This 207-nucleotide RNA was probed chemically with DMS and 2A3.
RNA sequence: GGGAACGACUCGAGUAGAGUCGAAAAACUUUCCAUUGCCAACGAUUUACUGUUGGCCUAUGGUCAGUCGCCAUUUAACUCUGAGGCUGAGUGUAUUUCAUUCAGCCCGAGAUUCGACGGGACCCCGGAUGACUUUAGGAUAAAUUAUCUUAAAGCCCCUAUUGUCCAUGUUCGCAUGGACAAUAGGAAAAGAAACAACAACAACAAC
Reactivity to DMS in 0.01 (KOAc 150mM, MgCl2 10mM, bicine 150mM(pH8.5), 24C), signal-to-noise 1, nucleotides 027 to 156: a010c010u000u000u010c000c000a020u000u020g020c000c000a010a000c000g000a280u000u000u010a120c150u010g000u030u000g020g000c010c050u010a020u010g010g030u000c110a050g020u000c000g010c000c010a100u000u000u000a060a080c090u000c010u020g000a090g030g000c000u000g000a040g030u000g020u020a180u000u000u000c000a020u000u000c000a010g010c010c000c010g030a020g010a100u010u000c080g000a050c020g000g000g000a060c010c020c030c050g000g010a130u010g010a020c010u000u000u030a010g000g000a020u000a090a140a200u010u000a100u000c000u000u010a010a010a030g010c020c000
Reactivity to 2A3 in 0.01 (KOAc 150mM, MgCl2 10mM, bicine 150mM(pH8.5), 24C), signal-to-noise 5, nucleotides 027 to 156: a000c010u000u030u010c010c000a000u000u030g000c000c000a020a000c050g050a100u060u260u300a210c170u210g000u010u010g000g000c010c000u050a010u000g010g000u000c010a010g010u010c050g040c060c000a040u130u140u060a120a050c010u020c060u110g070a080g050g000c000u010g010a050g010u010g010u050a280u110u200u260c000a000u000u000c000a000g000c000c000c000g000a000g000a000u080u090c030g030a010c000g030g030g050a050c010c000c000c020g110g060a150u150g060a090c010u010u010u000a000g010g000a010u020a100a300a180u290u180a130u070c000u000u000a010a010a010g000c020c000
It was measured as part of the RMDB library PDB130.
For 2A3, 2,747 sequencing reads were counted.
For 2A3 the reverse transcriptase was SuperScript II with manganese.
The reactions ran in a buffer of 150 mM KOAc, 10 mM MgCl2 and 150 mM bicine (pH 8.5), at 24 C.
The DMS profile rests on 3,313 reads.